[RMDB]
RNA sequence: GGGAACGACUCGAGUAGAGUCGAAAAGAGAACCUACCUCUAGGUUGGGGACAACAGUUGGAAACGACUGCUAAUACCCAAUGUGCCGCAAGGUGAAAGAUUUAUCGCCUGGAGAAGAGCUCGCGUCGAAGCCAUGCUUAUUCGUAAGCAUGGCUUCAAAAGAAACAACAACAACAAC
Reactivity to DMS in 0.01 (KOAc 150mM, MgCl2 10mM, bicine 150mM(pH8.5), 24C), signal-to-noise 2, nucleotides 027 to 126: g000a090g020a150a060c050c000u000a130c160c000u000c010u000a030g030g010u000u020g010g000g000g010a210c150a110a050c000a010g000u000u000g000g000a110a160a220c000g010a000c000u000g000c070u020a090a140u000a270c010c000c000a020a020u010g000u010g020c000c000g000c300a080a140g000g010u000g000a030a010a010g020a070u000u030u010a060u000c010g010c000c000u010g000g000a030g000a050a070g010a250g020c050u010c000g000c170g010u000c120
Reactivity to 2A3 in 0.01 (KOAc 150mM, MgCl2 10mM, bicine 150mM(pH8.5), 24C), signal-to-noise 1, nucleotides 027 to 126: g010a000g030a050a090c000c010u010a050c020c010u000c000u010a010g000g020u010u000g010g000g010g010a020c030a050a000c000a020g000u010u020g000g070a060a000a020c020g000a000c000u010g020c000u010a020a020u070a070c010c000c040a000a020u030g010u130g000c000c010g010c080a010a030g000g020u030g000a010a030a000g000a020u060u150u300a240u200c010g010c010c000u020g030g000a010g000a060a010g010a010g010c020u030c040g060c100g170u120c060
Chemical mapping of a 177-nucleotide RNA with DMS and 2A3.
2A3 adducts were read by reverse transcription with SuperScript II with manganese.